Conditions: 150 mM KOAc, 10 mM MgCl2 and 150 mM bicine (pH 8.5), 24 C. The record gives the reactivity of an RNA of 177 nucleotides to DMS and 2A3. Values cover nucleotides 27 to 126. The data come from the RNA Mapping Database (RMDB), library RFM100. High DMS reactivity at an A or C suggests that its Watson-Crick edge is free.
RNA sequence: GGGAACGACUCGAGUAGAGUCGAAAACCUCUUAAGGUAGCGUAAUACCUUGCCGCUUAAUUGGCGGCUUGCAUGAACGGAUUAACGACUCCCCCACUGUCCCCGGCCGGAAGCCGGCGAACCCGACUUUAGCAUUUAGCUUCGGCUAAAUGCUAAAAAAAGAAACAACAACAACAAC
Reactivity to DMS in 0.01 (KOAc 150mM, MgCl2 10mM, bicine 150mM(pH8.5), 24C), signal-to-noise 2, nucleotides 027 to 126: c000c030u020c200u000u000a060a050g030g040u010a010g010c150g030u000a070a150u010a010c060c010u010u010g000c000c000g040c000u010u030a090a110u040u030g010g000c000g000g000c000u010u020g020c090a100u010g030a150a100c110g050g000a100u020u040a090a090c060g010a080c050u000c000c000c020c000c000a050c070u000g000u010c030c040c000c030g000g000c020c050g000g030a070a110g000c030c030g000g000c010g000a060a120c060c000c010g010a120c200
Reactivity to 2A3 in 0.01 (KOAc 150mM, MgCl2 10mM, bicine 150mM(pH8.5), 24C), signal-to-noise 3, nucleotides 027 to 126: c000c020u030c100u150u140a100a010g050g010u020a020g070c070g150u100a090a100u060a090c010c000u010u050g010c000c000g000c040u090u170a140a100u200u240g020g010c000g000g000c000u000u070g090c040a110u140g020a040a040c080g000g080a100u110u050a060a040c040g150a100c020u030c000c000c000c000c000a040c040u030g030u050c000c000c020c000g010g000c010c010g120g000a040a020g050c020c000g000g010c000g010a020a020c010c020c000g030a030c030